[RMDB]
RNA sequence: GGGAACGACUCGAGUAGAGUCGAAAACUAAACCAUUACUACGUGUUUUCCGCUUUGAUAACAAGCCAGCGAAACAAGUUUCAAAUAUUCACGUAACGUUACUCAUUGGGUACGAUGAUUACUAUUAUCGGACUACAGUAUUCGUACUGUAGUCCGAAAAAGAAACAACAACAACAAC
Reactivity to DMS in 0.01 (KOAc 150mM, MgCl2 10mM, bicine 150mM(pH8.5), 24C), signal-to-noise 3, nucleotides 027 to 126: c070u000a100a160a180c100c050a040u020u010a130c130u000a050c050g030u000g000u000u000u000u010c090c100g000c100u000u010u000g030a040u010a110a070c120a040a040g020c040c120a110g030c100g020a080a030a090c130a060a150g010u000u010u000c080a040a060a140u010a060u000u010c010a020c040g010u010a000a150c090g010u000u020a010c090u000c040a130u000u010g010g010g020u000a030c070g020a130u000g010a050u000u010a060c150u030a120u000u000a140
Reactivity to 2A3 in 0.01 (KOAc 150mM, MgCl2 10mM, bicine 150mM(pH8.5), 24C), signal-to-noise 2, nucleotides 027 to 126: c030u010a100a000a000c020c020a100u070u130a050c050u030a020c000g040u060g020u040u020u060u060c030c020g050c120u100u040u060g210a230u210a190a050c060a040a010g020c040c020a030g040c010g090a040a070a040c030a060a150g020u000u050u120c080a080a060a020u200a140u110u080c030a010c020g010u030a140a020c030g020u070u050a030c020u050c080a200u030u230g080g000g070u050a030c010g030a070u080g030a040u180u070a040c060u010a060u190u080a100

This 177-nucleotide RNA was probed chemically with DMS and 2A3.
For DMS the reverse transcriptase was MarathonRT.
The DMS profile rests on 1,823 reads.
The RNA was probed in 150 mM KOAc, 10 mM MgCl2 and 150 mM bicine (pH 8.5) at 24 C.